[RMDB]
RNA sequence: GGGAACGACUCGAGUAGAGUCGAAAAAUUCUGAGACGACUAUGGAGGCUUCUGCUUCAAGUUCAGAGAAGGAAGGUGCGUAUCCGACUGCAAUUUGUGUUUGGCCAUUGUGGCGUGAAACGGAAUGAGCAUAAGGACCUUUCGAGGUCCUUAUGCUAAAAGAAACAACAACAACAAC
Reactivity to DMS in 0.01 (KOAc 150mM, MgCl2 10mM, bicine 150mM(pH8.5), 24C), signal-to-noise 2, nucleotides 027 to 126: a050u010u000c030u030g000a020g050a100c080g000a060c090u010a060u010g040g010a090g020g020c070u010u000c100u000g020c000u000u010c020a120a050g030u010u030c010a070g000a080g010a110a070g000g010a050a100g000g040u000g000c080g020u000a060u010c030c060g000a070c040u000g020c090a090a150u020u000u010g010u010g000u000u010u000g000g000c070c030a200u050u020g050u010g000g010c000g000u030g000a000a050a070c040g020g010a110a080u100g020
Reactivity to 2A3 in 0.01 (KOAc 150mM, MgCl2 10mM, bicine 150mM(pH8.5), 24C), signal-to-noise 1, nucleotides 027 to 126: a010u130u000c010u080g050a050g020a110c070g040a030c040u070a130u190g080g010a000g020g030c000u130u000c070u220g110c000u040u070c100a060a000g000u020u030c010a000g090a020g050a170a020g000g040a020a020g100g110u140g080c030g020u050a150u120c020c000g010a010c010u020g050c020a070a230u000u110u110g070u000g040u020u110u190g010g000c000c010a040u050u220g010u030g040g000c010g010u120g040a120a060a000c010g020g020a020a010u090g000
Chemical mapping of a 177-nucleotide RNA with DMS and 2A3.
The reactions ran in a buffer of 150 mM KOAc, 10 mM MgCl2 and 150 mM bicine (pH 8.5), at 24 C.
2A3 adducts were read by reverse transcription with SuperScript II with manganese.
Source: RMDB library OK1LIB, as collected in RNAgym.
For DMS, 3,065 sequencing reads were counted.
Reactivities are given for positions 27 through 126.